[RMDB]
RNA sequence: GGGAACGACUCGAGUAGAGUCGAAAAGAUAUGGACGGUCGUGACGAACUACCACAACUGUCGGAAACGACAGUUUGUGGCGGUUGACCGACCGUCCUAAGUCAAAAGUAUUGGUUCGCCAAUACAACGACAGUCAUAUGUUCGCAUAUGACUGUCGAAAAGAAACAACAACAACAAC
Reactivity to 2A3 in 0.01 (KOAc 150mM, MgCl2 10mM, bicine 150mM(pH8.5), 24C), signal-to-noise 3, nucleotides 027 to 126: g000a010u070a060u160g010g000a010c010g000g030u000c030g100u170g060a090c100g080a070a040c020u020a050c010c000a000c000a010a000c000u000g000u000c020g030g020a080a070a020c020g000a010c030a010g010u060u070u120g000u000g000g000c000g010g000u020u000g040a030c000c010g000a000c000c000g000u000c000c000u010a010a000g000u020c000a020a020a000a070g010u010a010u010u030g030g040u060u090c230g040c120c000a000a000u030a010c030a060a020
Reactivity to DMS in 0.01 (KOAc 150mM, MgCl2 10mM, bicine 150mM(pH8.5), 24C), signal-to-noise 4, nucleotides 027 to 126: g000a040u010a300u000g000g000a020c000g020g010u000c000g020u010g040a110c230g010a000a010c010u000a080c000c000a010c020a020a020c000u010g010u000c000g000g000a100a090a220c000g000a010c000a010g010u000u000u000g020u000g000g030c010g000g020u000u000g010a110c140c000g000a000c000c000g000u000c000c000u000a010a040g000u000c030a090a080a150a140g020u000a000u000u000g010g010u000u000c230g010c000c000a020a000u010a000c010a070a160
An RNA of 177 nucleotides, treated with 2A3 and DMS and read out base by base. The RNA was probed in 150 mM KOAc, 10 mM MgCl2 and 150 mM bicine (pH 8.5) at 24 C.